[RMDB]
RNA sequence: GGGAACGACUCGAGUAGAGUCGAAAACAUGACGCUGGAGACAUCCUGGAAGGGGAAAGAGGAGGGUGGAAGAAAAAGGGGUGGGCCCCCCCGAUCCGAGGGGCCCGACUGCCAAGUUUGGAGAGCAUAGGAUCGAGCUUCGGCUCGAUCAAAAGAAACAACAACAACAAC
Reactivity to 2A3 in 0.01 (KOAc 150mM, MgCl2 10mM, bicine 150mM(pH8.5), 24C), signal-to-noise 3, nucleotides 027 to 129: c050a060u080g060a030c040g010c010u040g000g010a030g010a020c000a070u040c010c020u030g020g030a070a070g040g010g010g010a020a100a030g040a010g050g050a090g010g010g030u070g010g020a050a040g080a040a080a020a010a020g010g000g000g020u060g000g000g000c010c000c000c000c020c000c030g020a050u050c020c000g020a050g000g010g000g010c000c000c000g000a040c010u020g020c000c030a050a090g050u040u090u050g060g000a070g000a000g010c040a080u080a050g050
Reactivity to DMS in 0.01 (KOAc 150mM, MgCl2 10mM, bicine 150mM(pH8.5), 24C), signal-to-noise 2, nucleotides 027 to 129: c060a040u050g020a110c080g000c090u000g050g020a080g000a060c140a130u060c020c070u040g110g000a070a060g030g060g000g000a030a030a040g050a060g000g070a040g030g020g110u000g000g000a050a000g010a020a000a070a060a060g000g000g000g020u020g010g000g050c000c010c000c040c000c000c180g050a050u040c000c150g050a080g020g000g030g010c150c010c000g050a000c070u030g000c110c080a100a090g000u040u030u130g060g020a090g020a160g050c050a050u090a050g040